[RMDB]
RNA sequence: GGGAACGACUCGAGUAGAGUCGAAAAAGGGUAAUAAGCUAGCGUCUACCUGCCAAGCCUUGUUGAAAAAGGUACCCUAAAUUUGCCAAUGAAUCCCGAGCUAGCUGCAACCAAGCUAAGGAAAAUGCAUCGACGAAGUGUUCGCACUUCGUCGAUGAAAAGAAACAACAACAACAAC
Reactivity to DMS in 0.01 (KOAc 150mM, MgCl2 10mM, bicine 150mM(pH8.5), 24C), signal-to-noise 1, nucleotides 027 to 126: a080g010g010g000u000a100a140u020a030a040g010c010u000a010g050c050g000u000c080u010a070c060c070u010g020c100c100a100a040g020c040c020u000u000g010u000u030g000a090a080a090a100a070g000g020u020a150c010c020c050u010a090a070a110u010u000u020g020c110c040a050a110u000g030a040a140u010c010c000c060g000a140g000c000u000a010g030c010u000g000c110a090a030c030c040a050a060g000c050u000a110a170g040g000a060a060a130a040u000g000